[RMDB]
RNA sequence: GGGAACGACUCGAGUAGAGUCGAAAAGAUAUGGAGCUGAACUACAGCGAAGUCGCUUCAUCGAUCUUAGCUCGGAAACGAGCUAAGGGAGAAGCGCCGAGCUGCAGCUCCUAAGUCAAAAUGUUAAAGUGCUUGGUUCGCCAAGCACUUUAACAAAGCGAACAGAUUUGUUCGCAAAUCUGUUCGCAAAAGAAACAACAACAACAAC
Reactivity to 2A3 in 0.01 (KOAc 150mM, MgCl2 10mM, bicine 150mM(pH8.5), 24C), signal-to-noise 2, nucleotides 027 to 156: g020a020u060a040u150g000g000a000g010c010u010g000a080a140c110u170a090c300a000g000c020g050a060a010g050u100c060g000c000u030u000c030a300u300c010g030a000u020c000u000u010a000g000c000u010c000g060g020a090a120a090c000g010a010g000c000u000a000a000g010g000g010a070g000a010a000g000c010g030c020c000g010a020g040c010u000g000c010a000g010c000u000c000c000u000a010a000g000u000c020a020a000a070a200u090g000u000u000a000a010a000g000u010g000c000u000u000g050g010u060u270c300g030c090c000a000a000g000c000a010c000u000u000u000a000a000c000a000a000a000